[RMDB]
RNA sequence: GGGAACGACUCGAGUAGAGUCGAAAAGAUAUGGAGGGAGAAACCCAGGGACACAUCGGAAACGAUGUGCGAACCCUGUGAGUUUCGAAGAACUCCUAAGUCAAAGAACUUCCUUCGGGAAGUUCAAGUGUUAUGCUAACUUCGGUUAGCAUAACACAAAAGAAACAACAACAACAAC
Reactivity to DMS in 0.01 (KOAc 150mM, MgCl2 10mM, bicine 150mM(pH8.5), 24C), signal-to-noise 2, nucleotides 027 to 126: g000a050u000a300u000g010g020a020g020g000g000a100g000a010a000a000c000c000c000a000g000g010g000a200c000a000c000a020u000c000g000g000a080a100a220c000g020a010u000g020u000g010c160g020a180a100c000c000c000u000g000u010g010a130g020u010u000u010c000g000a070a150g000a160a160c000u000c000c000u000a050a150g000u030c030a070a120a160g000a020a010c010u000u000c000c000u020u010c190g000g000g000a000a000g000u000u000c000a040a090
Reactivity to 2A3 in 0.01 (KOAc 150mM, MgCl2 10mM, bicine 150mM(pH8.5), 24C), signal-to-noise 1, nucleotides 027 to 126: g010a000u070a030u280g000g010a040g010g030g050a020g000a010a010a000c040c010c020a000g100g040g050a140c000a020c010a000u000c000g040g010a040a080a040c000g000a000u020g000u000g000c000g030a040a080c020c000c010u010g000u070g020a240g000u010u000u000c000g080a040a090g000a000a020c010u000c000c000u020a140a010g050u040c070a210a000a150g000a000a010c010u020u020c000c000u040u130c270g090g000g000a010a000g000u000u000c020a000a020
An RNA of 177 nucleotides, treated with DMS and 2A3 and read out base by base. For 2A3, 2,458 sequencing reads were counted. 2A3 adducts were read by reverse transcription with SuperScript II with manganese. Conditions: 150 mM KOAc, 10 mM MgCl2 and 150 mM bicine (pH 8.5), 24 C.